[RMDB]
RNA sequence: GGGAACGACUCGAGUAGAGUCGAAAACCGAGUGCCGUGGGAAGUUGUGGGAUUGCUUCCUGAAGGCAGCGCAUUGACAGCCGAGGCGGCGCUCGCGCCACUGUACUAGCGUGGUGUAUAAGUAGGGAAGACCAAUUGGUUAUCCAAUUGUUAUCAAGAGGAGCGUGCCAUUCGUGGCACGCUCCUCAAAAGAAACAACAACAACAAC
Reactivity to 2A3 in 0.01 (KOAc 150mM, MgCl2 10mM, bicine 150mM(pH8.5), 24C), signal-to-noise 2, nucleotides 027 to 156: c000c010g000a010g010u000g010c020c020g000u060g060g000g000a010a000g000u080u080g020u060g070g110g080a080u080u010g010c000u000u000c010c000u000g030a080a020g010g030c000a000g000c100g000c000a110u090u300g050a180c050a010g000c000c000g070a040g110g040c010g000g000c000g000c000u000c000g050c000g010c000c040a040c070u210g170u300a140c070u170a150g120c000g050u030g000g000u030g030u010a100u010a190a000g120u190a040g010g020g060a090a000g010a110c090c030a000a030u050u090g020g030u050u110a080u090c000c000a000a020u000u010g010u030u030a160u240c020a100a060
Structure probing data (2A3) for a 207-nucleotide construct. Values are in units of 0.01, from 0 to 300, in steps of 10. The RNA was probed in 150 mM KOAc, 10 mM MgCl2 and 150 mM bicine (pH 8.5) at 24 C. It was measured as part of the RMDB library OK3TST. For 2A3 the reverse transcriptase was SuperScript II with manganese.